[RMDB]
Conditions: 150 mM KOAc, 10 mM MgCl2 and 150 mM bicine (pH 8.5), 24 C. An RNA of 177 nucleotides, treated with DMS and 2A3 and read out base by base.

RNA sequence: GGGAACGACUCGAGUAGAGUCGAAAAGGCGCGCGCGCGUACAUGGCCAUACGUGGUACGAGCAUAUAUGGCCCGGCCGAUCGUGGCCCUGUCGAGGCCACGUGAGCAUGGCCGGCCCUGCGUACGGACUCUCGUGGAGUUUCGACUCCACGAGAGUAAAAGAAACAACAACAACAAC
Reactivity to DMS in 0.01 (KOAc 150mM, MgCl2 10mM, bicine 150mM(pH8.5), 24C), signal-to-noise 2, nucleotides 027 to 126: g010g000c010g000c020g010c170g020c080g010c040g040u000a030c090a050u000g020g010c040c080a040u000a030c080g040u010g020g040u000a050c110g000a110g040c020a080u010a070u010a030u000g020g010c110c010c050g000g000c000c000g000a120u010c000g040u000g000g000c010c000c020u020g020u010c180g010a210g020g020c000c010a010c000g020u000g000a130g000c110a120u020g000g000c010c000g010g000c060c010c010u010g040c070g010u000a050c040g000g000
Reactivity to 2A3 in 0.01 (KOAc 150mM, MgCl2 10mM, bicine 150mM(pH8.5), 24C), signal-to-noise 2, nucleotides 027 to 126: g070g010c040g000c000g000c000g000c020g000c010g040u040a090c020a150u120g000g040c020c010a060u040a090c070g020u030g090g080u130a050c050g020a070g170c090a030u050a010u010a030u210g020g000c040c050c000g020g010c010c010g010a040u080c010g030u000g000g000c010c020c020u290g130u220c170g120a060g000g000c000c000a000c040g010u030g010a040g040c060a190u220g030g030c000c080g020g000c010c000c000u060g030c030g030u050a050c000g070g060

For DMS the reverse transcriptase was MarathonRT. It was measured as part of the RMDB library OK2TRN.